RNA sequence: GGGAACGACUCGAGUAGAGUCGAAAAUCCUAAGUCGUUUCGAGAGGAUCAUAGGCGUUGAAAUAGGUCGGAAACGACCUAUGGAGCCUAUUUUCCUCUAAGACAGAACGAUAUGGAAAAACUGAAGUAGCAAAGGUUCGCCUUUGCUACUUCAGAACCAGUUAUUUAUCUUCGGAUAAAUAACUGGAAAAGAAACAACAACAACAAC
Reactivity to 2A3 in 0.01 (KOAc 150mM, MgCl2 10mM, bicine 150mM(pH8.5), 24C), signal-to-noise 2, nucleotides 027 to 156: u030c010c000u020a080a000g040u020c010g010u020u030u060c040g040a030g000a000g020g020a000u000c010a010u040a010g010g000c010g130u150u040g000a000a000a000u000a000g020g000u000c010g000g010a060a050a060c000g010a010c000c010u010a010u020g010g010a010g000c000c000u000a010u010u020u020u010c010c000u000c000u000a000a000g010a040c050a020g050a020a000c010g010a000u070a110u240g110g000a070a080a120a020a020c000u000g010a000a000g000u000a000g000c000a000a000a000g020g030u060u090c230g070c020c000u000u020u000g000c000u010a000c000u000u000c000a000g000a000a000
Reactivity to DMS in 0.01 (KOAc 150mM, MgCl2 10mM, bicine 150mM(pH8.5), 24C), signal-to-noise 1, nucleotides 027 to 156: u000c000c000u000a100a250g010u010c000g000u030u000u010c070g000a070g010a020g030g000a020u000c100a040u000a010g020g000c020g040u020u020g010a210a150a070u000a010g020g010u000c030g060g000a110a080a300c000g030a010c010c000u000a000u000g010g010a300g010c010c000u000a040u010u000u000u000c010c000u000c000u000a020a050g010a210c210a120g010a020a050c030g010a060u000a150u020g010g020a090a110a060a180a170c010u000g000a030a000g000u020a010g050c000a000a010a020g010g050u010u010c300g000c020c010u000u000u000g030c020u000a000c000u000u010c000a010g000a040a130
Conditions: 150 mM KOAc, 10 mM MgCl2 and 150 mM bicine (pH 8.5), 24 C. Chemical mapping of a 207-nucleotide RNA with 2A3 and DMS. The 2A3 profile rests on 2,122 reads. It was measured as part of the RMDB library RNAMAK. Values cover nucleotides 27 to 156.